Chemical mapping of a 307-nucleotide RNA with DMS. In probing experiments dimethyl sulfate is read out at A N1 and C N3, which are open when not base-paired. Reactivities are rounded to 0.1 and cut off at 0 and 3. The RNA was probed in 150 mM KOAc, 10 mM MgCl2 and 150 mM bicine (pH 8.5) at 24 C.
RNA sequence: GGGAACGACUCGAGUAGAGUCGAAAAACGCGCCACGCUACGGCGUGGCGCGAUGUCUUAUUACACCGCAGCAACCGUGUGCUGAGCGCCUCUCAGUAUUGAUUAAACACAGUUGGUGUCGCCUAUGUUAACGUCAAAUAUAAAGUAUUGGUCAUGGACUGGCGCGUUUAUAUUAUCGCUACUGUUCUGGGCCGAGUUAAUCUGGAUUGCCGUCUAAUCUCGUCAAAGCCCGAUAAUGCGUUAUUUAUCGGGCUUUUUCAUCUUCAAAUCCAUAGUUCGCUAUGGAUAAAAGAAACAACAACAACAAC
Reactivity to DMS in 0.01 (KOAc 150mM, MgCl2 10mM, bicine 150mM(pH8.5), 24C), signal-to-noise 1, nucleotides 027 to 266: a150c000g130c070g080c050c070a100c140g110c040u010a050c170g030g150c090g300u010g010g110c090g100c050g010a010u000g000u020c040u000u000a120u000u030a070c140a030c060c080g040c030a090g000c090a140a110c070c020g060u000g010u000g020c000u000g000a020g000c300g010c020c050u010c000u020c040a080g010u010a080u070u020g040a120u030u010a110a080a120c100a020c020a090g040u000u000g000g000u010g000u000c060g010c030c040u000a050u010g010u000u000a060a020c140g010u000c040a050a040a020u000a090u010a110a100a090g000u010a090u000u000g020g000u020c020a160u010g010g000a010c060u000g020g020c000g020c070g020u010u000u010a070u010a130u050u000a040u020c020g040c010u010a030c000u000g020u020u000c020u000g030g000g000c000c000g000a040g000u040u000a080a050u000c020u030g000g010a090u000u000g020c020c070g010u020c130u000a050a130u000c090u000c090g020u000c080a010a010a020g000c000c000c000g040a010u000a000a020u000g060c060g010u000u000a020u050u010u000a000u000c000g010g000g000c000u000u000u000u000u000c000a050u010c060u020u000c220a070a100